[RMDB]
RNA sequence: GGGAACGACUCGAGUAGAGUCGAAAAGAUUUACGGCGGGAAACGUCCCGGGUGCGCGCUGAUGUCCCGGGUGCGGCACCGACCGAAAGGCGCUGAAACGGCACCGACCGAAACCGCCGGAAAGAAACAUUAGCUAUAUAUUCGUAUAUAGCUAAUGAAAAGAAACAACAACAACAAC
Reactivity to DMS in 0.01 (KOAc 150mM, MgCl2 10mM, bicine 150mM(pH8.5), 24C), signal-to-noise 9, nucleotides 027 to 126: g010a180u000u000u000a100c010g010g000c000g000g000g000a100a090a210c110g000u000c010c030c020g010g010g020u010g010c040g010c100g010c120u000g010a120u000g010u000c010c010c010g000g000g020u000g010c020g010g000c040a080c060c030g000a110c090c090g010a040a090a140g000g020c020g000c040u000g010a060a110a200c050g000g000c020a090c100c070g000a120c050c010g000a070a100a150c020c010g010c010c000g000g000a030a030a060g010a150a090a160
Reactivity to 2A3 in 0.01 (KOAc 150mM, MgCl2 10mM, bicine 150mM(pH8.5), 24C), signal-to-noise 5, nucleotides 027 to 126: g030a020u080u080u140a040c000g000g000c010g000g010g070a080a110a020c010g050u030c020c010c010g020g010g010u110g010c090g000c020g040c140u150g070a240u110g060u070c010c010c000g030g000g010u050g000c010g030g000c020a040c030c010g040a040c010c020g020a050a030a000g000g000c010g000c050u070g040a160a130a060c040g000g000c020a040c100c070g080a110c020c000g010a090a040a010c010c010g000c000c010g010g010a050a060a010g070a020a070a000